[RMDB]
Overview:
Conditions: 150 mM KOAc, 10 mM MgCl2 and 150 mM bicine (pH 8.5), 24 C. Structure probing data (2A3 and DMS) for a 177-nucleotide construct. Values cover nucleotides 27 to 126. For 2A3 the reverse transcriptase was SuperScript II with manganese. The DMS profile rests on 24,590 reads. For 2A3, 8,981 sequencing reads were counted. High DMS reactivity at an A or C suggests that its Watson-Crick edge is free.
RNA sequence: GGGAACGACUCGAGUAGAGUCGAAAAGGGCUGGACAAUUUGGCCUCUCUUUGACACAGGGGAUUAAAGAGAUUGCUAGCUGGGAGAUUCAUGAGGUUUGGCAUCUGCCUUGUGCCAUUUACGGAGCAAUAGGAUCAAAUUUCGAUUUGAUCCUAUUAAAAGAAACAACAACAACAAC
Reactivity to 2A3 in 0.01 (KOAc 150mM, MgCl2 10mM, bicine 150mM(pH8.5), 24C), signal-to-noise 5, nucleotides 027 to 126: g050g010g010c050u050g010g050a060c050a160a170u070u100u160g040g000c020c000u020c010u000c000u060u050u070g050a020c030a020c020a090g030g000g010g010a030u090u200a080a070a010g050a010g020a020u030u180g000c020u030a040g000c020u040g030g110g020a120g020a110u120u090c040a030u180g050a060g040g060u090u110u090g030g010c000a030u000c020u060g070c010c000u020u020g020u000g000c000c000a020u060u100u100a100c100g040g010a050g020c020
Reactivity to DMS in 0.01 (KOAc 150mM, MgCl2 10mM, bicine 150mM(pH8.5), 24C), signal-to-noise 9, nucleotides 027 to 126: g000g000g020c040u000g010g000a090c130a080a130u010u010u000g020g010c030c100u010c010u000c020u000u010u000g010a050c070a080c110a110g000g010g000g010a220u010u000a050a060a100g000a050g010a040u000u010g010c030u000a050g020c060u000g000g010g000a120g000a110u000u010c080a060u000g010a110g000g000u000u000u010g020g010c030a040u010c060u000g000c030c030u000u000g010u000g000c030c030a060u000u010u000a090c160g000g000a100g010c190